[RMDB]
RNA sequence: GGGAACGACUCGAGUAGAGUCGAAAAACGUCAAGCUCAACAACCUUUACUUCAACACCGUUAAAUCCAAGGGCUACGAUGCGUUGAUCGACGACAACGAUGCCGGAAUUUGGAGCAAGAAACCGACCAUUCUUCUGAACCCCAAGGGCUCAGUUAACGUACCAUGAACAUUCGUGUUCAUGGUACGAAAAGAAACAACAACAACAAC
Reactivity to DMS in 0.01 (KOAc 150mM, MgCl2 10mM, bicine 150mM(pH8.5), 24C), signal-to-noise 2, nucleotides 027 to 156: a020c040g030u000c060a060a190g020c030u000c040a120a170c050a060a070c000c000u020u000u000a090c060u020u000c030a080a050c000a140c020c030g000u010u000a060a100a110u010c030c060a080a100g010g030g030c050u000a060c040g010a070u000g010c080g010u010u000g020a080u010c040g020a060c030g020a100c010a060a110c090g000a140u000g040c030c010g000g010a070a110u000u000u010g000g020a040g000c060a050a170g020a030a050a070c010c020g010a040c000c020a110u000u000c030u000u000c040u000g000a000a030c000c020c000c130a090a130g090g030g010c010u030c030a020g010u000u000a050a130
Reactivity to 2A3 in 0.01 (KOAc 150mM, MgCl2 10mM, bicine 150mM(pH8.5), 24C), signal-to-noise 6, nucleotides 027 to 156: a000c060g040u050c050a050a030g000c010u020c040a050a130c030a040a080c080c010u120u120u160a090c030u090u130c050a100a080c060a090c060c030g080u130u150a040a100a030u050c050c030a070a050g040g010g000c020u080a050c060g070a060u100g050c020g020u010u020g070a140u140c100g030a050c030g050a040c020a050a020c040g040a040u050g040c020c010g050g010a030a040u050u030u070g020g010a030g030c030a050a030g060a130a050a040c060c030g030a020c040c030a050u090u000c010u090u000c010u020g020a050a050c000c000c020c040a100a160g020g000g000c010u000c010a020g020u030u080a070a030
Structure probing data (DMS and 2A3) for a 207-nucleotide construct. DMS adducts were read by reverse transcription with MarathonRT. 2A3 is a SHAPE reagent: it acylates the 2'-hydroxyl of flexible nucleotides of all four kinds. Reactivities are given for positions 27 through 156. It was measured as part of the RMDB library OK3TST. The RNA was probed in 150 mM KOAc, 10 mM MgCl2 and 150 mM bicine (pH 8.5) at 24 C.